[RMDB]
RNA sequence: GGGAACGACUCGAGUAGAGUCGAAAAAGAUACAGGUAGAGUGAAAGUUGUCGCUAACCACCUAGCAGACAAGUUGACACCAGCACAUUAUGCGACAGCCUCCAUAUUCCUCAACACAGCACUACACUAAAAUGUGGCUAAUCACCAUUCUUGCCACCCACCGAGAAUACUUCGGUAUUCUCGGUGGAAAAGAAACAACAACAACAAC
Reactivity to 2A3 in 0.01 (KOAc 150mM, MgCl2 10mM, bicine 150mM(pH8.5), 24C), signal-to-noise 2, nucleotides 027 to 156: a000g030a000u160a060c040a000g000g040u060a050g080a120g110u110g070a160a040a010g040u040u020g000u060c000g010c020u000a070a010c040c000a020c060c040u020a000g040c000a020g010a060c020a060a070g050u060u090g070a050c020a000c050c000a010g050c020a010c000a100u070u300a030u280g000c010g040a020c020a020g000c000c000u000c000c000a000u010a000u070u100c000c000u000c010a020a010c020a000c000a020g010c010a000c020u010a010c080a000c030u120a130a070a000a040u140g000u000g000g040c020u040a080a040u120c030a040c060c010a030u070u050c120u060u180g030c020c020a000c000